[RMDB]
RNA sequence: GGGAACGACUCGAGUAGAGUCGAAAACUGAGUGGGGUAACAUGUUAACGGGCAUUGCUGCACGUCCUCCACCAGGUGAACAGUUUAAGCACCUCGUGCCUCUUAUGCAUAAGGGGGCUGCGUGGCCGAGCAGCCACCUUCGGGUGGCUGAAAAGAAACAACAACAACAAC
Reactivity to 2A3 in 0.01 (KOAc 150mM, MgCl2 10mM, bicine 150mM(pH8.5), 24C), signal-to-noise 9, nucleotides 027 to 129: c030u030g020a030g030u040g000g010g000g030u090a100a030c040a150u120g060u190u170a070a040c020g020g040g000c040a060u050u300g080c090u090g030c050a010c030g020u020c000c000u010c000c000a010c010c010a010g030g000u040g030a070a050c060a070g020u070u100u140a090a010g030c040a060c020c010u010c030g020u030g030c020c000u050c000u070u120a130u250g090c070a080u130a180a110g000g010g000g010g000c030u040g010c010g010u030g010g000c030c020g030a020g040
Reactivity to DMS in 0.01 (KOAc 150mM, MgCl2 10mM, bicine 150mM(pH8.5), 24C), signal-to-noise 6, nucleotides 027 to 129: c000u010g000a130g030u020g020g020g000g040u000a110a100c170a120u010g000u020u060a110a060c020g000g000g000c040a080u020u070g000c230u020g000c030a060c060g000u000c070c010u010c010c010a000c010c000a050g000g000u010g010a080a090c130a120g000u040u030u040a080a070g040c100a170c000c000u000c000g030u010g000c040c000u010c030u020u030a070u030g040c220a140u060a090a080g000g000g000g000g000c000u030g000c030g020u000g000g010c200c080g010a060g020